[RMDB]
RNA sequence: GGGAACGACUCGAGUAGAGUCGAAAACGACCAGACCACGCGGGACUGCCUCGCGCUCAACGAGCUCUGCCGCCCGCGCGACGACCCCGAGCUCCAGGACACCCUCUUUGGCGCGUACAAGGCGCCCCGAUCUAUGGUGAUUCGUCACCAUAGAUCGAAAAGAAACAACAACAACAAC
Reactivity to DMS in 0.01 (KOAc 150mM, MgCl2 10mM, bicine 150mM(pH8.5), 24C), signal-to-noise 5, nucleotides 027 to 126: c090g000a140c070c040a110g010a120c080c020a110c050g010c040g010g000g010a170c090u010g000c190c040u000c050g000c060g000c050u000c110a100a100c110g000a060g000c040u000c060u000g040c050c060g010c020c050c060g020c040g000c030g000a100c080g000a130c060c020c010c010g000a090g010c030u010c010c020a060g000g000a100c110a100c030c030c000u010c040u000u010u000g010g010c030g020c000g010u010a100c280a080a150g000g010c000g000c000c000c180
Reactivity to 2A3 in 0.01 (KOAc 150mM, MgCl2 10mM, bicine 150mM(pH8.5), 24C), signal-to-noise 4, nucleotides 027 to 126: c050g060a040c020c020a030g050a040c040c030a050c050g020c030g030g030g110a150c040u080g030c020c020u030c030g020c010g000c040u040c040a090a160c070g010a010g000c020u020c070u170g060c020c010g060c000c000c000g040c010g000c020g040a060c050g040a040c020c010c020c000g020a020g030c010u020c010c010a020g040g010a040c010a060c020c010c000u050c030u110u060u100g010g000c000g000c000g020u070a080c050a090a030g070g000c000g010c010c000c010
Notes
An RNA of 177 nucleotides, treated with DMS and 2A3 and read out base by base. 2A3 adducts were read by reverse transcription with SuperScript II with manganese. For DMS the reverse transcriptase was MarathonRT. The reactions ran in a buffer of 150 mM KOAc, 10 mM MgCl2 and 150 mM bicine (pH 8.5), at 24 C.